RNA sequence: GGGAACGACUCGAGUAGAGUCGAAAAGAUAUGGAACUCCUGCUACGUCAACAGCGGAAUUCGGAAACGAAUUCCGACAUGACGGUCAGGAGGUUCCUAAGUCAAAGUAGGGACUUCGGUCCCUACACAACAUGGUAUGGUUCGCCAUACCAUGUUGAAAAGAAACAACAACAACAAC
Reactivity to 2A3 in 0.01 (KOAc 150mM, MgCl2 10mM, bicine 150mM(pH8.5), 24C), signal-to-noise 5, nucleotides 027 to 126: g020a050u110a090u180g010g000a000a000c010u000c020c000u020g040c080u240a300c040g020u010c020a100a130c040a250g090c010g000g000a000a000u000u000c000g000g030a050a080a070c010g000a000a010u000u010c000c000g020a030c010a020u050g010a000c010g010g040u040c010a010g020g020a020g020g010u010u010c000c000u010a100a030g090u050c080a170a030a070g010u000a010g000g010g010a010c010u060u090c300g060g000u000c000c000c000u000a000c010a000
Reactivity to DMS in 0.01 (KOAc 150mM, MgCl2 10mM, bicine 150mM(pH8.5), 24C), signal-to-noise 7, nucleotides 027 to 126: g010a060u000a300u000g000g010a030a060c010u000c010c000u000g000c200u020a270c020g010u000c010a040a100c300a250g010c010g010g000a010a020u000u010c000g000g000a110a090a260c010g020a010a000u000u000c000c000g010a020c100a140u000g000a010c010g010g010u000c010a010g000g000a010g000g010u010u000c000c000u010a040a120g010u000c040a090a130a160g020u000a000g020g000g020a010c000u000u010c220g030g000u000c000c000c000u000a000c000a080
The data come from the RNA Mapping Database (RMDB), library TTRDES.
This 177-nucleotide RNA was probed chemically with 2A3 and DMS.
DMS adducts were read by reverse transcription with MarathonRT.
For DMS, 9,269 sequencing reads were counted.